[RMDB]
Background: Structure probing data (2A3 and DMS) for a 177-nucleotide construct. Conditions: 150 mM KOAc, 10 mM MgCl2 and 150 mM bicine (pH 8.5), 24 C. Reactivities are given for positions 27 through 126.
RNA sequence: GGGAACGACUCGAGUAGAGUCGAAAAGGCCGUUCUUAGGUGUAAGCCCUGCCGGUUGUCUUGAUAGACAAAAUUUUACCGAGACUUGUAAUAGCCAAAAGCAGGCAGCAGGCGAGUGUGGGGUCAACCCAUUCCCCGUAUUCGUACGGGGAAUGGGAAAAGAAACAACAACAACAAC
Reactivity to 2A3 in 0.01 (KOAc 150mM, MgCl2 10mM, bicine 150mM(pH8.5), 24C), signal-to-noise 2, nucleotides 027 to 126: g040g000c000c010g120u050u040c090u100u200a130g000g040u030g040u080a050a000g040c000c000c000u000g020c000c000g030g010u020u020g010u010c010u060u120g070a130u100a040g000a020c130a000a120a000a010u130u080u040u050a060c020c000g000a030g000a160c020u000u030g010u080a080a100u010a060g050c020c030a050a010a010a090g000c040a030g000g000c000a000g000c030a020g010g020c010g000a030g020u060g010u030g010g010g010g020u050c020a030a030
Reactivity to DMS in 0.01 (KOAc 150mM, MgCl2 10mM, bicine 150mM(pH8.5), 24C), signal-to-noise 2, nucleotides 027 to 126: g000g000c000c020g020u000u000c000u020u020a110g000g010u000g010u000a040a100g000c080c000c010u000g020c000c020g030g050u000u000g000u000c010u030u050g010a110u070a000g020a050c030a040a030a030a110u000u020u000u010a070c000c000g010a090g000a100c050u000u000g010u000a040a020u000a070g020c190c300a120a110a120a190g020c020a070g000g000c000a160g000c010a060g010g020c060g020a080g010u000g040u010g040g000g060g000u020c160a100a150